The data come from the RNA Mapping Database (RMDB), library TTRDES. The record gives the reactivity of an RNA of 177 nucleotides to 2A3 and DMS. For DMS, 2,703 sequencing reads were counted. 2A3 adducts were read by reverse transcription with SuperScript II with manganese.
RNA sequence: GGGAACGACUCGAGUAGAGUCGAAAAGAUAUGGAGGACUCGAGGAACUACACGAUAGAUCGGAAACGAUCUAUACGUGCCUCGAGGUCCUCCUAAGUCAAAACUACACAGCUUCGGCUGUGUAGAACAAAAACGCAAUGUUCGCAUUGCGUUUUUGAAAAGAAACAACAACAACAAC
Reactivity to 2A3 in 0.01 (KOAc 150mM, MgCl2 10mM, bicine 150mM(pH8.5), 24C), signal-to-noise 2, nucleotides 027 to 126: g030a030u050a020u130g020g000a000g030g010a020c000u000c010g000a020g020g030a210a180c260u300a050c300a010c020g000a020u000a000g030a000u010c010g010g040a060a040a030c010g010a010u000c030u020a000u060a040c010g000u000g050c010c010u000c010g010a000g010g000u000c000c000u010c000c000u010a000a000g010u010c000a010a010a050a040c010u010a000c010a000c010a000g030c020u190u210c300g260g000c020u000g020u000g000u000a000g000a020a010
Reactivity to DMS in 0.01 (KOAc 150mM, MgCl2 10mM, bicine 150mM(pH8.5), 24C), signal-to-noise 3, nucleotides 027 to 126: g010a020u010a300u000g000g000a030g000g000a300c000u000c000g010a000g000g010a200a030c130u020a300c000a010c010g000a050u000a000g020a010u000c000g010g020a080a080a140c000g000a020u000c000u010a000u000a050c010g030u000g000c030c000u000c010g010a030g000g030u000c000c010u000c000c010u000a000a030g000u000c010a130a090a080a140c000u000a010c000a010c010a010g000c000u000u030c300g030g000c000u000g000u010g000u000a000g010a080a150